An RNA of 177 nucleotides, treated with 2A3 and DMS and read out base by base.
The RNA was probed in 150 mM KOAc, 10 mM MgCl2 and 150 mM bicine (pH 8.5) at 24 C.
DMS adducts were read by reverse transcription with MarathonRT.
2A3 adducts were read by reverse transcription with SuperScript II with manganese.
Reactivities are given for positions 27 through 126.
RNA sequence: GGGAACGACUCGAGUAGAGUCGAAAAGAUCAAUUAUGAUUGCAAUGUAAUAUGUCAAGGCAGACAUAUCUAGCUGUCGCCUUAGCUAGAGAUUGCCGCUUUAUUGCUUUCAUAAGAACGGCUAGAAGAUGGAGGGAUGAUUCGUCAUCCCUCCAUCAAAAGAAACAACAACAACAAC
Reactivity to 2A3 in 0.01 (KOAc 150mM, MgCl2 10mM, bicine 150mM(pH8.5), 24C), signal-to-noise 2, nucleotides 027 to 126: g080a160u080c010a010a080u050u000a000u040g000a010u030u020g000c000a000a020u010g030u220a010a070u100a060u190g110u100c060a060a080g000g000c000a010g030a090c020a050u110a030u020c000u000a000g000c010u040g140u260c090g240c050c020u070u070a000g000c010u010a010g000a010g030a040u110u230g020c040c050g000c030u040u040u030a010u000u020g010c000u000u020u010c000a020u030a000a020g030a040a050c080g070g040c020u050a050g020a140a030
Reactivity to DMS in 0.01 (KOAc 150mM, MgCl2 10mM, bicine 150mM(pH8.5), 24C), signal-to-noise 3, nucleotides 027 to 126: g000a120u020c060a130a180u000u000a010u000g010a010u000u000g000c000a000a000u010g000u010a080a080u010a040u000g010u010c180a060a050g000g010c020a150g020a030c050a030u000a040u000c010u000a000g000c010u010g010u000c180g000c170c140u000u000a020g010c000u000a000g010a010g010a080u010u000g020c020c040g000c050u000u000u000a030u000u000g000c020u000u000u000c000a000u020a010a030g000a090a130c180g000g010c050u000a100g010a090a100